[RMDB]
RNA sequence: GGGAACGACUCGAGUAGAGUCGAAAAAAGCAUGUCUCUCUAUUGUCUCUCAAUUCAGAACUUAGUAUGGUGAUGGAUCGAUAGAGAGACAUUCCUGCAUCUGUCAUCCAUCACCAUAAAAACAAAAUAACACCAUGAUAUUCGUAUCAUGGUGUUAAAAAGAAACAACAACAACAAC
Reactivity to DMS in 0.01 (KOAc 150mM, MgCl2 10mM, bicine 150mM(pH8.5), 24C), signal-to-noise 4, nucleotides 027 to 126: a090a070g020c250a050u000g020u000c000u000c010u000c000u000a020u000u000g010u010c080u000c060u000c060a090a080u000u020c130a100g010a110a130c170u020u010a070g020u000a020u000g010g030u000g000a030u000g000g000a000u000c090g010a010u000a000g010a010g010a020g010a000c010a030u000u000c010c010u000g010c090a120u010c100u000g000u000c090a030u000c000c010a000u000c000a000c000c000a010u000a000a030a050a070a020c190a050a040a070a080
Reactivity to 2A3 in 0.01 (KOAc 150mM, MgCl2 10mM, bicine 150mM(pH8.5), 24C), signal-to-noise 3, nucleotides 027 to 126: a010a000g130c080a030u040g010u000c000u010c000u000c000u030a020u040u030g080u020c030u030c020u050c190a040a170u280u090c060a070g070a220a090c030u080u110a120g040u040a130u010g000g000u000g000a000u000g000g010a010u060c020g010a000u020a010g010a000g000a000g000a010c000a000u000u000c000c010u000g010c000a080u070c060u170g200u090c040a000u000c000c000a000u010c000a000c000c000a000u010a000a030a000a000a000c030a000a080a010a060
An RNA of 177 nucleotides, treated with DMS and 2A3 and read out base by base.
DMS adducts were read by reverse transcription with MarathonRT.
For 2A3, 3,572 sequencing reads were counted.